This 177-nucleotide RNA was probed chemically with DMS and 2A3.
RNA sequence: GGGAACGACUCGAGUAGAGUCGAAAAGAUAUGGAUCUGAACUACUUCCCAAUCACAACGUUGAAAUCGGAAACGAUGGAGUUGUGGAGGAAGCAGAUCCUAAGUCAAAGAGCGGUUCGCCGCUCAACUCAUGGAAACUGUUCGCAGUUUCCAUGAGAAAAGAAACAACAACAACAAC
Reactivity to DMS in 0.01 (KOAc 150mM, MgCl2 10mM, bicine 150mM(pH8.5), 24C), signal-to-noise 2, nucleotides 027 to 126: g010a080u000a300u020g010g010a000u000c000u010g010a060a050c080u030a300c030u000u020c000c000c060a140a140u020c000a000c000a000a010c010g010u010u000g000a090a080a030u010c000g000g000a100a060a210c010g000a010u000g000g000a080g010u000u000g030u000g000g010a100g010g000a050a020g010c000a010g000a000u000c000c000u000a040a070g000u000c030a050a100a150g000a020g030c010g000g010u000u020c220g040c000c000g040c000u000c000a050a090
Reactivity to 2A3 in 0.01 (KOAc 150mM, MgCl2 10mM, bicine 150mM(pH8.5), 24C), signal-to-noise 3, nucleotides 027 to 126: g040a010u080a050u190g000g000a000u010c020u000g020a100a130c060u140a070c000u300u000c000c000c070a020a060u230c000a000c010a010a010c030g260u300u100g060a100a050a000u010c020g010g020a060a060a050c030g000a000u010g040g000a050g020u000u000g010u010g010g010a100g000g000a000a000g010c010a000g000a000u000c000c000u000a090a020g020u020c040a230a110a000g010a000g000c020g060g080u090u200c300g050c090c030g000c000u010c010a000a010

Notes: For DMS the reverse transcriptase was MarathonRT.